[RMDB]
RNA sequence: GGGAACGACUCGAGUAGAGUCGAAAAGCUAGGGAGCGCACGAUGCCAGUGCCCUGACGUCUAGCCUGCGUCUCAACUAGUCUGAGUCAAUGAAAACGCUGGGGGUGAUGUACGAGACUAGUACACAGUGUUAGCUGUUCUUCGGAGCAGUUAACACAAAAGAAACAACAACAACAAC
Reactivity to DMS in 0.01 (KOAc 150mM, MgCl2 10mM, bicine 150mM(pH8.5), 24C), signal-to-noise 9, nucleotides 027 to 126: g010c030u000a050g010g000g010a100g010c150g010c060a040c090g010a100u020g010c060c060a060g010u010g010c030c030c020u000g010a090c070g000u010c030u010a080g010c030c020u000g010c070g000u010c020u010c060a080a070c030u000a030g000u010c020u000g000a100g010u010c080a070a090u030g010a090a080a070a090c090g010c030u000g000g010g000g000g020u000g000a070u010g000u010a040c060g000a060g000a070c040u000a060g000u010a070c110a060c160a120
Reactivity to 2A3 in 0.01 (KOAc 150mM, MgCl2 10mM, bicine 150mM(pH8.5), 24C), signal-to-noise 9, nucleotides 027 to 126: g020c010u030a010g000g020g020a030g010c040g000c010a010c030g060a030u090g040c010c020a010g010u010g020c000c000c010u010g020a020c010g040u010c010u020a010g000c000c000u020g020c010g050u000c000u000c010a020a040c010u020a000g030u010c020u030g040a010g030u020c030a030a080u130g090a060a050a030a040c060g000c040u040g000g000g000g000g030u040g030a070u050g010u030a020c020g000a010g020a040c010u010a010g020u050a010c060a000c010a020